[RMDB]
RNA sequence: GGGAACGACUCGAGUAGAGUCGAAAAGACGUGGAGGUUUCGCGCCCUCCUUUGCGCGUAAGUACGUCGAAAUUCGGUGCUUAGGAUCGCACCGUUUGAUCCAUUUGAUAUCCGCUUAGUGCCGCGGUUGGGCAUUUACACUUACCCGAAAGGGGAAGAUUUUACUCGGAUUCGUCCGAGUAAAAUCAAAAGAAACAACAACAACAAC
Reactivity to 2A3 in 0.01 (KOAc 150mM, MgCl2 10mM, bicine 150mM(pH8.5), 24C), signal-to-noise 3, nucleotides 027 to 156: g020a010c030g020u060g000g110a100g060g050u010u100u110c020g020c010g020c020c000c010u100c000c050u060u060u080g020c030g000c000g030u030a070a040g040u030a040c020g000u010c030g020a030a040a050u050u030c000g000g020u020g000c030u140u130a150g100g040a110u110c060g000c010a020c030c010g000u010u010u050g030a030u010c010c090a090u060u040u170g140a130u080a080u090c010c030g000c020u040u180a030g030u010g080c050c020g010c060g070g000u030u080g040g000g030c020a010u050u020u050a020c060a010c020u050u090a050c010c000c010g060a070a030a010g020g010g000g000a000a020
Reactivity to DMS in 0.01 (KOAc 150mM, MgCl2 10mM, bicine 150mM(pH8.5), 24C), signal-to-noise 2, nucleotides 027 to 156: g000a080c030g020u020g010g010a040g040g010u000u000u000c110g020c070g000c140c040c090u010c000c020u000u020u000g000c000g020c050g030u000a050a070g000u000a080c050g040u000c040g010a080a050a130u000u000c000g040g060u010g020c000u000u000a220g050g000a160u000c230g020c010a080c030c010g040u000u000u000g010a160u010c020c070a200u000u000u020g020a130u010a100u000c040c000g000c040u000u000a040g040u000g030c000c040g000c020g000g030u000u000g000g030g040c050a060u000u000u000a060c090a040c070u000u010a140c010c000c000g020a090a100a180g010g000g000g030a050a150